[RMDB]
An RNA of 207 nucleotides, treated with 2A3 and DMS and read out base by base. The reactions ran in a buffer of 150 mM KOAc, 10 mM MgCl2 and 150 mM bicine (pH 8.5), at 24 C. It was measured as part of the RMDB library M2RFOK.

RNA sequence: GGGAACGACUCGAGUAGAGUCGAAAAAUCAGAGGGCGCUAUCAUGCAAACUAGGAUGGUCUGCUCAUGCACAGAACCAACUACCGAUAACUAACAGUGCAUGAAGGUUAGUUAUUCCAUAUUAAUUAAAACUCGUAAUUCUUCGGAAUUACGAGAAGGAUAUUAAUAACUUCGGUUAUUAAUAUCCAAAAGAAACAACAACAACAAC
Reactivity to 2A3 in 0.01 (KOAc 150mM, MgCl2 10mM, bicine 150mM(pH8.5), 24C), signal-to-noise 6, nucleotides 027 to 156: a000u060c030a030g010a040g030g040g000c020g000c030u070a100u260c070a070u190g020c040a050a040a060c050u050a030g070g010a050u040g000g010u020c040u040g010c020u020c010a000u030g000c010a020c000a030g050a100a070c030c020a040a050c050u140a120c020c080g030a010u010a020a000c000u010a010a000c010a060g020u010g070c000a010u010g020a030a050g080g000u010u010a000g000u010u010a030u100u060c040c000a080u130a100u290u170a120a110u100u120a040a100a040a080c000u000c000g000u000a000a010u000u000c010u020u020c100g090g000a000a000u010u000a000c000g000a000g000a000a000
Reactivity to DMS in 0.01 (KOAc 150mM, MgCl2 10mM, bicine 150mM(pH8.5), 24C), signal-to-noise 2, nucleotides 027 to 156: a070u000c040a130g000a110g020g010g010c090g000c060u000a110u000c050a100u000g010c030a110a100a190c060u000a080g010g000a150u000g020g000u000c010u010g000c010u000c060a070u000g010c030a070c030a080g000a090a170c040c020a070a080c050u000a180c050c010g020a120u010a030a020c010u000a040a060c070a110g030u000g020c010a060u000g000a050a170g000g000u000u000a060g030u010u000a020u000u000c020c040a070u000a150u000u000a060a220u010u010a080a110a080a170c000u020c010g010u000a000a020u000u000c030u000u010c300g050g000a000a030u000u000a000c000g010a000g000a000a080